[RMDB]
RNA sequence: GGGAACGACUCGAGUAGAGUCGAAAAAAGUUGCUGCCAUCAUAACUGAUAAAGUAGCACCCACACUGACUUUAUCCAUUAGUACUCUUGCACCGACUAAUCGACCAUUGACUUCUGCUUUUACAUAACCCGUACCACUAUUCGUAGUGGUACGGGUAAAAGAAACAACAACAACAAC
Reactivity to DMS in 0.01 (KOAc 150mM, MgCl2 10mM, bicine 150mM(pH8.5), 24C), signal-to-noise 2, nucleotides 027 to 126: a030a050g000u000u000g020c040u000g000c000c050a070u040c020a080u000a130a100c190u020g000a000u010a050a050a070g000u010a030g020c030a130c020c040c030a110c150a100c030u000g000a060c060u000u000u000a040u010c030c160a080u000u000a060g020u000a070c090u000c010u010u000g010c100a080c050c020g000a070c050u000a070a060u000c080g010a070c040c050a050u000u000g030a120c110u000u000c060u000g020c100u000u000u000u010a090c110a100u020a070
Reactivity to 2A3 in 0.01 (KOAc 150mM, MgCl2 10mM, bicine 150mM(pH8.5), 24C), signal-to-noise 1, nucleotides 027 to 126: a000a010g070u080u030g020c040u030g040c020c010a020u040c000a010u070a220a070c040u070g000a030u020a060a020a000g000u010a010g020c000a040c000c030c000a010c020a000c030u130g090a040c010u070u050u060a040u050c040c020a070u050u080a020g030u070a070c010u030c020u100u070g000c000a020c080c000g060a050c020u030a030a050u040c010g020a040c010c020a050u070u070g020a050c020u050u040c030u150g100c020u010u150u000u000a080c060a080u100a070

Chemical mapping of a 177-nucleotide RNA with DMS and 2A3. For DMS, 1,010 sequencing reads were counted. For 2A3 the reverse transcriptase was SuperScript II with manganese. The data come from the RNA Mapping Database (RMDB), library OK2TST. Values cover nucleotides 27 to 126.